[RMDB]
RNA sequence: GGGAACGACUCGAGUAGAGUCGAAAACGUAAACCUUUCGAGGUUUACGAAAAAACCUUUGUGUUAGCCCGAUAUUGAGACGGUUCCCAUUGGGACCGUCAAUGAUGUAUCGGAAGCUAACACUCUGGUAAAAAAGCAUAGCCUUCGGGCUAUGCAAGUUGGAUCUUAGCUUCGGCUAAGAUCCAACAAAAGAAACAACAACAACAAC
Reactivity to 2A3 in 0.01 (KOAc 150mM, MgCl2 10mM, bicine 150mM(pH8.5), 24C), signal-to-noise 1, nucleotides 027 to 156: c000g000u000a010a000a010c000c000u060u110u140c290g060a020g000g000u000u000u000a010c000g040a100a000a000a000a000a000c010c000u010u010u010g010u010g000u000u000a000g020c000c000c000g000a020u000a010u000u060g020a030g000a000c010g000g000u160u130c000c010c060a140u300u300g050g010g000a000c010c000g000u000c000a020a030u040g000a040u120g000u000a000u000c000g000g040a090a020g000c000u000a000a000c000a010c000u000c000u000g000g000u010a130a100a000a000a000a100g000c000a000u000a000g000c000c000u000u100c300g080g030g000c010u000a020u020g000c000a010a030
Background
Chemical mapping of a 207-nucleotide RNA with 2A3. Reactivities are given for positions 27 through 156. 2A3 adducts were read by reverse transcription with SuperScript II with manganese. Source: RMDB library RNAMAK, as collected in RNAgym.